The data come from the RNA Mapping Database (RMDB), library TTRDEL. Chemical mapping of a 177-nucleotide RNA with 2A3 and DMS. 2A3 is a SHAPE reagent: it acylates the 2'-hydroxyl of flexible nucleotides of all four kinds.
[RMDB]
RNA sequence: GGGAACGACUCGAGUAGAGUCGAAAAGAUAUGGAGAUCCAGGGAGCUGUCUCGGAAACGAGCAGCGAAGAACUGGAAUCUCCUAAGUCAAAACAUAUGCGCUUAUCUUCGGAUAAGCGCAUAUGAAUCGUAAACUAUCGUUCGCGAUAGUUUACGAAAAAGAAACAACAACAACAAC
Reactivity to 2A3 in 0.01 (KOAc 150mM, MgCl2 10mM, bicine 150mM(pH8.5), 24C), signal-to-noise 1, nucleotides 027 to 126: g020a000u050a070u110g010g010a000g000a020u030c000c010a050g000g060g010a030g000c020u090g060u300c000u030c050g000g000a090a070a070c010g000a000g000c000a020g010c020g020a100a010g010a010a010c010u010g000g030a060a150u000c000u000c010c000u010a070a000g060u020c030a040a020a020a080c000a000u010a000u040g000c010g000c010u010u010a000u020c010u050u100c290g040g040a040u000a020a000g000c030g000c000a000u010a010u000g000a030a000
Reactivity to DMS in 0.01 (KOAc 150mM, MgCl2 10mM, bicine 150mM(pH8.5), 24C), signal-to-noise 3, nucleotides 027 to 126: g010a050u000a300u000g000g000a020g020a060u000c010c000a020g020g000g000a080g010c000u000g020u010c010u000c000g000g000a120a110a170c010g010a010g020c000a020g010c000g000a060a090g010a060a170c000u020g010g000a060a100u000c000u000c000c000u000a000a070g000u020c040a110a070a110a240c010a010u000a010u000g000c000g020c000u000u000a010u000c000u000u000c190g010g020a000u000a000a010g010c000g020c000a000u010a000u000g000a010a090